[RMDB]
RNA sequence: GGGAACGACUCGAGUAGAGUCGAAAAUCAACUUCUUGCGUGAGUUUUUUUGCGGUGCGUAAAUAAACGUUUAGUUCUUUAAUCACAUGGAUCGGCAAUCGUACCGUUCGGCUUUGAUUCAUGAUCAACUAGUCACUGAUUUCGAUCAGUGACUAGUAAAAGAAACAACAACAACAAC
Reactivity to 2A3 in 0.01 (KOAc 150mM, MgCl2 10mM, bicine 150mM(pH8.5), 24C), signal-to-noise 2, nucleotides 027 to 126: u040c000a000a030c010u040u040c030u070u270g020c060g040u110g010a060g080u030u020u000u000u050u100u130g010c000g040g000u030g010c030g010u060a010a090a090u120a070a110a010c020g020u050u170u160a060g020u050u030c020u050u150u090a130a150u110c070a040c000a110u020g030g000a010u020c010g040g010c060a090a130u070c020g040u020a050c000c050g010u030u060c050g040g000c000u050u040u160g000a000u000u000c000a000u030g050a040u080c010a000
Reactivity to DMS in 0.01 (KOAc 150mM, MgCl2 10mM, bicine 150mM(pH8.5), 24C), signal-to-noise 3, nucleotides 027 to 126: u000c070a030a040c030u000u000c050u010u010g020c200g010u010g000a030g010u000u010u000u000u020u000u010g020c030g000g020u000g010c010g000u030a040a050a060u000a050a080a080c100g010u010u000u000a100g010u000u010c050u000u000u010a080a110u000c180a140c040a040u000g000g000a010u000c000g010g000c040a100a070u000c030g010u000a020c010c020g000u010u010c150g000g010c010u000u010u010g010a020u000u000c000a020u000g000a150u010c180a080